[RMDB]
RNA sequence: GGGAACGACUCGAGUAGAGUCGAAAAGGGAACUCUCCCAAGAAGAAAAGAAGGGAAAAUCGGGAAGUGGAGGGAUCCCCACAACGCUGGAGACAUCCUGGAAGGGGAAAGAAGCUAGGUGGAAAAGAAGGGGUGGGCCUCCCGAUCCGAGGGGCCCGUAAGUGAGAAGGUUCGCCUUCUCACUUACAAAAGAAACAACAACAACAAC
Reactivity to 2A3 in 0.01 (KOAc 150mM, MgCl2 10mM, bicine 150mM(pH8.5), 24C), signal-to-noise 1, nucleotides 027 to 156: g000g000g010a050a050c040u030c050u040c070c030c030a030a060g130a010a010g050a020a100a020a030g080a030a050g030g020g050a060a030a010a080u140c060g000g000g040a110a070g040u110g070g040a050g030g010g000a080u050c010c000c020c010a020c020a080a060c100g040c050u040g010g000a040g020a050c000a090u080c040c030u060g070g020a040a030g080g000g000g010a000a070a070g070a050a010g030c010u050a040g040g090u120g070g020a120a150a000a000g090a040a010g110g000g040g000u070g020g010g000c000c010u030c000c020c010g040a030u000c020c000g020a080g000g000g020g010c000c000c000